[RMDB]
RNA sequence: GGGAACGACUCGAGUAGAGUCGAAAACAGAUCUGUCCUGCCUGUGUACCUCACAAUAGGUGAUCUGGUAUGUGAGCUAUGUACCAUUAGUUCAGUUCUUAGAAACUUUGGUAUUCUGAUUAGGAUCGAUCCAUACAUUUGCAGCUCAAGAGUGAGCGUUCCGUGGGUGAUUCGUCACCCACGGAACAAAAGAAACAACAACAACAAC
Reactivity to 2A3 in 0.01 (KOAc 150mM, MgCl2 10mM, bicine 150mM(pH8.5), 24C), signal-to-noise 2, nucleotides 027 to 156: c020a000g020a000u010c030u030g020u000c050c010u000g050c010c030u190g000u030g050u160a030c000c060u070c020a120c000a130a250u220a220g060g040u070g040a110u070c090u100g020g040u150a080u080g290u010g020a020g030c070u090a040u290g060u060a050c000c030a080u040u030a030g030u000u040c020a070g100u260u010c050u080u050a080g030a070a090a070c000u060u000u000g020g000u000a020u180u020c030u100g150a170u080u180a050g010g020a000u050c000g020a020u000c030c000a060u080a210c010a060u220u170u200g190c090a010g000c020u030c010a020a050g150a040g180u130g010a020g020c040